Chemical mapping of a 177-nucleotide RNA with 2A3 and DMS.
RNA sequence: GGGAACGACUCGAGUAGAGUCGAAAAACGAACGAGACCUUUGUGUGGGAGUUAGUAAUUAUGUCGCUUGGUAUAUAUGUAUUUAUAUACUUGACAUAUAUUACUUUACACCUCAGACAAUGGAAGAAUCUUGCGUAUAGUUCGCUAUACGCAAGAUAAAAGAAACAACAACAACAAC
Reactivity to 2A3 in 0.01 (KOAc 150mM, MgCl2 10mM, bicine 150mM(pH8.5), 24C), signal-to-noise 7, nucleotides 027 to 126: a000c030g030a030a010c060g040a030g100a200c000c010u030u020u010g020u010g020u020g010g020g000a110g020u020u020a000g000u000a000a010u010u010a000u010g000u000c020g040c200u100u220g030g000u000a000u000a000u000a000u020g060u140a150u170u130u000a000u000a000u000a000c000u020u070g000a000c000a000u010a000u000a000u000u000a000c000u010u010u010a040c040a040c010c000u040c010a020g020a100c000a010a020u070g020g020a050a040g060a080
Reactivity to DMS in 0.01 (KOAc 150mM, MgCl2 10mM, bicine 150mM(pH8.5), 24C), signal-to-noise 4, nucleotides 027 to 126: a120c070g010a060a110c120g010a160g000a180c000c010u000u000u010g020u000g010u010g000g000g000a250g000u000u020a000g020u000a010a000u000u020a020u000g000u000c000g000c300u030u040g000g000u000a010u000a000u000a010u000g000u040a040u010u000u000a000u000a000u000a000c000u000u030g000a000c000a010u000a000u050a000u000u010a000c000u000u010u010a030c070a070c050c000u000c020a020g000a010c010a010a010u000g000g000a100a070g010a130
Values cover nucleotides 27 to 126. It was measured as part of the RMDB libraries RFM100 and RFMREP.